Conditions: 150 mM KOAc, 10 mM MgCl2 and 150 mM bicine (pH 8.5), 24 C.
An RNA of 177 nucleotides, treated with DMS and 2A3 and read out base by base.
For 2A3, 32,013 sequencing reads were counted.

[RMDB]
RNA sequence: GGGAACGACUCGAGUAGAGUCGAAAAUCCAGGCCAUUCGUGGCCUGGAGAAAACGCCGUAGCGCCGAUGGUACUGUGGGGUCUCCCCAUGCGAGAGUAGGGAAAUAGUUCAAUUCGUUGAACUAAAAACAUUACCAUUUUUCGAAAUGGUAAUGUUAAAAGAAACAACAACAACAAC
Reactivity to DMS in 0.01 (KOAc 150mM, MgCl2 10mM, bicine 150mM(pH8.5), 24C), signal-to-noise 9, nucleotides 027 to 126: u000c000c000a010g010g010c000c000a040u000u010c190g030u000g010g010c000c000u000g000g010a010g000a050a050a100a100c110g010c010c040g010u000a070g020c070g020c020c020g000a100u020g010g020u000a060c080u000g020u000g010g000g000g010u010c080u000c030c010c010c060a050u000g010c040g000a110g000a080g010u000a060g010g000g000a060a060a140u000a010g010u000u000c000a010a040u000u010c180g020u000u000g000a000a010c000u000a010a040a070
Reactivity to 2A3 in 0.01 (KOAc 150mM, MgCl2 10mM, bicine 150mM(pH8.5), 24C), signal-to-noise 9, nucleotides 027 to 126: u000c000c000a000g010g000c000c010a040u060u070c220g090u080g000g000c000c000u000g000g000a000g000a010a080a000a010c090g030c020c020g050u050a020g030c040g020c050c020g100a100u100g020g020u040a050c020u030g020u050g030g010g010g060u030c090u100c040c000c000c010a030u100g020c030g030a080g000a020g040u070a050g010g020g040a020a080a110u080a010g010u000u000c010a010a020u050u050c170g050u080u030g000a000a000c000u040a060a050a010
The data come from the RNA Mapping Database (RMDB), library M2PK50. For DMS, 47,976 sequencing reads were counted.